[RMDB]
RNA sequence: GGGAACGACUCGAGUAGAGUCGAAAAACUGAUACCUUACGAGGUAUCAGAAUGACUUCGUGGUAGAGCGCCACGAACGGAAAAUAAAGAAAGCUCGAUUGAAACGCACCGUGUACGCACUGUGCGAAAAAGUCGAUCCAGUUCGCUGGAUCGACAAGAUGAUAUCAGCCUUCGGGCUGAUAUCAUCAAAAGAAACAACAACAACAAC
Reactivity to 2A3 in 0.01 (KOAc 150mM, MgCl2 10mM, bicine 150mM(pH8.5), 24C), signal-to-noise 2, nucleotides 027 to 156: a000c000u000g000a000u000a000c000c000u050u020a100c290g110a020g000g010u000a000u000c000a000g020a020a040u120g040a050c030u000u010c000g000u000g000g020u050a140g020a000g020c010g030c000c000a000c010g000a010a020c000g070g030a020a050a030a000u080a010a050a000g160a090a040a030g000c030u000c000g160a140u080u280g050a140a090a010c020g010c000a000c000c020g020u000g000u020a020c190g020c080a000c000u000g000u000g000c000g010a060a000a000a000a000g000u000c000g000a000u000c000c000a000g020u090u120c140g090c110u000g000g000a000u000c000g000a000c000a000a030